[RMDB]
RNA sequence: GGGAACGACUCGAGUAGAGUCGAAAAGGGGUCUACUAGAGUCCUGAGGGUGAGGGAGCUCUGAAGCCUCCACGGAGCGACGAUCUCACCUACCCACCAGGAUGGAGUAGACGGAGGCACCCAAACUACAAUAAUUGGUUCGCCAAUUAUUGUAGAACGUAUAAGGUAACUUCGGUUACCUUAUACGAAAAGAAACAACAACAACAAC
Reactivity to 2A3 in 0.01 (KOAc 150mM, MgCl2 10mM, bicine 150mM(pH8.5), 24C), signal-to-noise 2, nucleotides 027 to 156: g050g000g000g010u000c000u010a010c010u030a040g080a070g220u010c010c000u020g020a070g000g020g010u000g010a000g010g010g010a000g000c000u000c010u000g010a030a010g000c000c000u000c000c000a030c030g010g000a000g010c020g190a280c020g000a020u010c010u000c010a020c010c000u010a030c020c010c000a030c020c010a010g020g020a010u100g020g040a030g000u020a010g010a020c050g000g000a010g010g000c010a020c000c000c010a060a090a030c000u000a000c000a000a000u000a010a000u000u010g010g030u020u120c200g070c080c000a000a000u000u000a010u010u010g000u000a000g000a030a000
Reactivity to DMS in 0.01 (KOAc 150mM, MgCl2 10mM, bicine 150mM(pH8.5), 24C), signal-to-noise 2, nucleotides 027 to 156: g000g020g010g010u000c010u000a000c020u000a230g010a220g010u000c010c000u020g000a210g000g000g020u020g000a040g010g020g010a070g040c000u020c010u000g010a090a130g020c030c000u000c030c000a300c030g020g020a010g020c010g000a150c160g000a030u000c000u010c000a020c010c000u000a020c000c000c000a300c050c000a030g000g000a040u000g030g000a240g040u000a030g000a090c040g040g040a050g000g030c000a050c010c020c020a050a150a150c010u010a020c010a010a000u000a010a030u000u000g000g030u000u010c300g020c010c000a030a020u010u000a000u010u010g010u020a010g020a100a150
Conditions: 150 mM KOAc, 10 mM MgCl2 and 150 mM bicine (pH 8.5), 24 C. Chemical mapping of a 207-nucleotide RNA with 2A3 and DMS. DMS adducts were read by reverse transcription with MarathonRT. Reactivities are given for positions 27 through 156.